[RMDB]
RNA sequence: GGGAACGACUCGAGUAGAGUCGAAAAGAUAUGGACCUAGGAGGGAGCUUGAAUGUCGGAAACGACAUUAAGCAUCGAUCUCCGGGUCCUAAGUCAAACUUGUAUUCCAGUUCGCUGGAAUACAAGAGUGCAUACAGAGGUUCGCCUCUGUAUGCACAAAAGAAACAACAACAACAAC
Reactivity to 2A3 in 0.01 (KOAc 150mM, MgCl2 10mM, bicine 150mM(pH8.5), 24C), signal-to-noise 2, nucleotides 027 to 126: g000a000u020a000u030g000g000a000c020c020u040a300g040g000a000g010g040g020a050g000c000u020u050g230a070a020u000g040u010c010g020g000a030a000a000c000g000a000c000a010u020u020a010a000g010c000a030u300c020g010a010u010c010u000c010c110g000g010g000u010c010c010u000a000a000g000u010c000a050a080a130c010u010u020g000u020a000u010u030c000c010a010g010u030u080c300g100c140u000g000g000a020a000u000a010c010a000a000g030a070
Reactivity to DMS in 0.01 (KOAc 150mM, MgCl2 10mM, bicine 150mM(pH8.5), 24C), signal-to-noise 2, nucleotides 027 to 126: g000a040u000a070u010g000g010a000c000c000u010a140g040g000a040g010g090g010a010g020c010u000u000g000a030a010u010g010u000c000g030g000a000a010a010c000g030a020c010a020u010u000a030a000g030c000a300u010c220g000a020u010c000u000c000c000g020g000g000u000c010c000u010a020a060g000u000c000a160a090a240c010u000u000g010u000a000u000u010c000c010a010g010u010u020c300g000c000u000g010g010a020a000u000a000c000a010a020g010a120

Chemical mapping of a 177-nucleotide RNA with 2A3 and DMS.